[RMDB]
RNA sequence: GGGAACGACUCGAGUAGAGUCGAAAACACAGUCCUGAAGGCCCCACAUCUUGUGGAUCUUGCCGUGGACAUGUUUCUGGCAUGUGUUUCUCAAGCCUGCAACCGACGACUGAACAGACGUGUGAACUCCACGAAUCUACUUCGGUAGAUUCGUGGAAAAAGAAACAACAACAACAAC
Reactivity to 2A3 in 0.01 (KOAc 150mM, MgCl2 10mM, bicine 150mM(pH8.5), 24C), signal-to-noise 4, nucleotides 027 to 126: c050a000c030a020g010u010c020c000u040g060a120a050g050g010c010c000c040c010a030c010a050u200c110u220u260g010u000g010g020a030u030c080u090u160g000c010c000g050u030g000g010a020c020a030u040g010u000u020u000c050u050g030g010c040a060u070g050u030g020u030u040u000c020u010c030a060a030g010c010c010u040g000c040a070a060c000c030g040a060c030g010a010c030u070g020a110a010c010a050g060a060c060g040u080g030u050g070a010a040c030
Reactivity to DMS in 0.01 (KOAc 150mM, MgCl2 10mM, bicine 150mM(pH8.5), 24C), signal-to-noise 3, nucleotides 027 to 126: c030a120c150a120g000u000c010c010u020g010a090a080g000g000c010c300c070c010a010c010a080u030c180u010u020g030u010g000g000a050u010c060u030u010g020c000c010g000u030g010g010a060c000a110u000g030u000u000u000c020u000g000g000c020a110u000g010u040g000u000u000u000c000u000c040a100a120g050c030c030u000g000c050a080a080c060c040g030a060c040g000a130c060u000g000a070a040c110a060g010a040c080g010u000g000u010g000a070a140c140
Structure probing data (2A3 and DMS) for a 177-nucleotide construct. For 2A3 the reverse transcriptase was SuperScript II with manganese. Source: RMDB libraries RFM100 and RFMREP, as collected in RNAgym. Conditions: 150 mM KOAc, 10 mM MgCl2 and 150 mM bicine (pH 8.5), 24 C.